[RMDB]
RNA sequence: GGGAACGACUCGAGUAGAGUCGAAAACGUGGGUCCUCAAAUGACUGAGCCUACUGUGUAAUACAUGCAGCAUACAGAUAUGUGUUCGUUGACCAUAUCAGUAAAGUUCUGGUCAACAGUAGGCUAUUAGCAGUUAAGUUUUUGGGGAGUGAAAAGACAAAAUCGCUAUAUUCGUAUAGCGAUUUUGAAAAGAAACAACAACAACAAC
Reactivity to 2A3 in 0.01 (KOAc 150mM, MgCl2 10mM, bicine 150mM(pH8.5), 24C), signal-to-noise 6, nucleotides 027 to 156: c050g050u120g050g060g070u020c000c000u010c000a000a000a040u080g020a010c010u040g030a000g010c000c000u010a010c010u010g030u020g100u260a060a050u070a100c070a050u110g080c020a040g030c010a050u080a130c040a030g100a070u050a020u050g120u010g030u060u040c130g070u120u200g010a000c000c000a010u010a010u090c010a020g110u140a030a170a030g010u070u040c030u040g000g030u020c030a020a000c000a000g010u010a000g000g000c000u000a010u010u090a010g000c010a000g000u030u040a090a060g040u060u040u030u050u060g010g000g020g000a010g000u050g030a090a140a010a010g060a020
Reactivity to DMS in 0.01 (KOAc 150mM, MgCl2 10mM, bicine 150mM(pH8.5), 24C), signal-to-noise 4, nucleotides 027 to 156: c070g020u000g000g020g000u000c010c000u000c000a020a050a090u010g000a070c030u020g010a080g020c010c000u000a030c000u000g000u000g010u000a110a150u000a090c030a060u010g010c060a050g030c030a300u000a040c030a100g000a050u000a040u000g010u000g010u000u000c150g050u000u010g010a050c010c000a030u000a030u000c010a080g000u010a030a040a180g020u000u000c030u000g020g000u000c030a050a030c010a010g020u000a020g010g030c010u000a050u000u000a090g030c030a080g020u000u000a070a120g010u000u000u000u000u010g010g010g020g010a090g020u000g000a040a090a080a150g000a200